[RMDB]
The data come from the RNA Mapping Database (RMDB), library RFMREP. Structure probing data (2A3 and DMS) for a 177-nucleotide construct. High 2A3 reactivity points to a flexible backbone, as in loops and unpaired stretches. The 2A3 profile rests on 2,066 reads. Reactivities are given for positions 27 through 126.
RNA sequence: GGGAACGACUCGAGUAGAGUCGAAAAGUACAUUAGGAGGACUGCCAGUGCCAAACUGGAGGAAGGAACGGGCAACGGUAGGUCAGUAUGCCCCGAAUGUGCUGGGCGACACGCGGGCUACAAUGGCGAUGCAUAGAGUGUUCGCACUCUAUGCAUCAAAAGAAACAACAACAACAAC
Reactivity to 2A3 in 0.01 (KOAc 150mM, MgCl2 10mM, bicine 150mM(pH8.5), 24C), signal-to-noise 2, nucleotides 027 to 126: g040u030a010c000a070u080u130a020g060g050a040g010g040a020c020u040g000c020c000a020g030u010g120c050c020a120a070a080c030u020g020g030a000g010g020a040a020g060g000a070a030c070g000g030g000c030a050a020c020g060g040u050a040g070g040u060c030a020g010u050a030u150g030c000c000c010c000g090a130a060u120g040u050g000c040u040g020g040g020c010g020a010c030a000c050g000c050g030g010g000c010u050a000c050a060a210u060g040g020c050
Reactivity to DMS in 0.01 (KOAc 150mM, MgCl2 10mM, bicine 150mM(pH8.5), 24C), signal-to-noise 2, nucleotides 027 to 126: g020u010a090c070a070u000u000a110g000g020a090g000g020a050c040u020g000c000c010a050g030u010g000c090c120a040a140a110c060u010g000g000a080g000g010a110a030g000g010a050a090c150g020g000g030c030a040a060c070g000g000u010a040g020g010u000c070a070g010u000a090u010g010c040c030c040c130g010a060a050u010g000u000g010c050u000g010g010g030c020g000a090c040a050c140g000c080g020g000g040c050u000a060c120a080a100u000g000g000c150

Description:
For DMS the reverse transcriptase was MarathonRT. 2A3 adducts were read by reverse transcription with SuperScript II with manganese.